[RMDB]
RNA sequence: GGGAACGACUCGAGUAGAGUCGAAAAUAUCAUUUCGAUGAUAACGUUGUCCUAAGUCUAUCUGAUAUCUCUAGCGUGCACAUCGAUCACAUCGGAAACGAUGUGGGAGUGUCGGGUAUCAAGGAUAGAUAUGGAACCAGUGUAGCUUCGGCUACAACAUGUUAGCGAAAUUCGUUUCGCUAACAUGAAAAGAAACAACAACAACAAC
Reactivity to 2A3 in 0.01 (KOAc 150mM, MgCl2 10mM, bicine 150mM(pH8.5), 24C), signal-to-noise 8, nucleotides 027 to 156: u090a010u000c010a020u040u170u230c280g140a040u030g010a020u020a100a100c150g030u050u080g060u050c010c000u030a110a030g020u000c000u000a010u000c020u030g000a000u010a010u000c070u000c110u190a120g130c080g220u240g030c100a010c020a210u190c070g130a130u080c010a000c000a010u010c010g030g050a090a100a050c020g000a010u000g000u000g000g010g010a060g000u000g020u030c030g010g000g000u010a000u010c040a070a090g140g000a000u000a000g000a000u010a030u030g010g000a040a060c080c040a080g070u010g000u080a010g000c000u040u060c300g110g000c010u000a000c000a010a010
Reactivity to DMS in 0.01 (KOAc 150mM, MgCl2 10mM, bicine 150mM(pH8.5), 24C), signal-to-noise 4, nucleotides 027 to 156: u000a020u000c010a040u000u000u000c230g020a040u000g030a050u000a060a160c100g020u000u010g010u000c000c020u000a100a230g030u000c010u000a030u000c000u000g020a010u000a000u000c010u000c060u000a160g020c210g080u000g000c020a020c020a160u000c130g000a160u010c000a010c000a020u010c010g040g000a180a070a280c000g010a020u000g030u000g000g000g000a060g000u010g020u000c050g010g020g000u000a000u010c010a040a140g020g010a020u000a000g020a020u000a090u000g000g010a070a060c010c020a130g040u000g000u000a020g000c000u000u010c300g050g020c000u000a010c010a040a200